This 177-nucleotide RNA was probed chemically with 2A3 and DMS.

RNA sequence: GGGAACGACUCGAGUAGAGUCGAAAAUCCGUCGUUCCAUCCUUUUCUUACCUUUUGGCCGGCAUGGCCCCAGCCUCCUCGCUGGCGCCGGCUGGGCAACGAUCCGAGGGGACUAUCCCUCUCGAGACCUAUUUUCAUAGUUCGCUAUGAAAAUAGGAAAAGAAACAACAACAACAAC
Reactivity to 2A3 in 0.01 (KOAc 150mM, MgCl2 10mM, bicine 150mM(pH8.5), 24C), signal-to-noise 4, nucleotides 027 to 126: u030c000c010g010u000c010g010u010u000c010c020a110u100c040c030u080u130u060u090c030u070u120a180c030c020u110u080u030u100g180g080c000c000g010g000c060a180u120g010g000c000c030c000c000a000g000c010c020u120c010c010u080c080g000c000u000g000g000c010g000c010c000g040g000c000u010g000g010g010c010a030a030c040g070a060u010c020c000g000a000g010g000g000g020a010c030u170a120u190c010c010c000u030c000u000c010g080a110g010a030
Reactivity to DMS in 0.01 (KOAc 150mM, MgCl2 10mM, bicine 150mM(pH8.5), 24C), signal-to-noise 4, nucleotides 027 to 126: u000c010c030g010u000c020g000u000u000c000c010a150u020c070c050u000u000u000u000c040u000u000a130c070c070u000u010u000u020g000g020c010c010g020g030c000a060u000g040g010c030c150c010c010a010g010c010c110u020c210c150u000c190g010c010u000g000g020c300g000c010c010g010g000c000u000g000g000g000c010a020a020c300g010a090u010c070c010g010a010g000g010g010g010a170c160u000a120u000c160c000c000u000c010u000c010g000a080g020a170